[RMDB]
The data come from the RNA Mapping Database (RMDB), library M2RFPK. This 207-nucleotide RNA was probed chemically with 2A3. The 2A3 profile rests on 627 reads.
RNA sequence: GGGAACGACUCGAGUAGAGUCGAAAAGACGCCUUUAGAAGAAGAGGCUAGGGGGUAUUCCGGUGUGGGAUACUUAGUAAUAUGCAACGCUAAUUGCAUAAGAUUGUAGGACGGUAUUUACAGUCUUUAGAGAUAAGCACGUUCGCGUGCUUAUCAAGCUGUCGGAUAUGUUCGCAUAUCCGACAGCAAAAGAAACAACAACAACAAC
Reactivity to 2A3 in 0.01 (KOAc 150mM, MgCl2 10mM, bicine 150mM(pH8.5), 24C), signal-to-noise 1, nucleotides 027 to 156: g030a030c040g010c010c010u070u070u210a110g010a200a050g040a020a100g000a060g030g000c010u050a030g060g020g020g000g000u010a010u060u090c010c010g140g090u280g020u250g050g000g000a010u020a060c000u000u030a040g000u030a040a070u050a030u120g000c010a020a020c050g030c170u080a130a000u150u030g000c000a000u000a030a030g010a050u070u060g000u020a020g020g020a020c100g080g050u020a040u080u160u030a050c040a010g010u050c000u050u090u090a160g010a000g000a040u000a000a010g000c000a000c010g000u010u020c090g030c000g050u000g000c030u000u010a000u000c000a010a000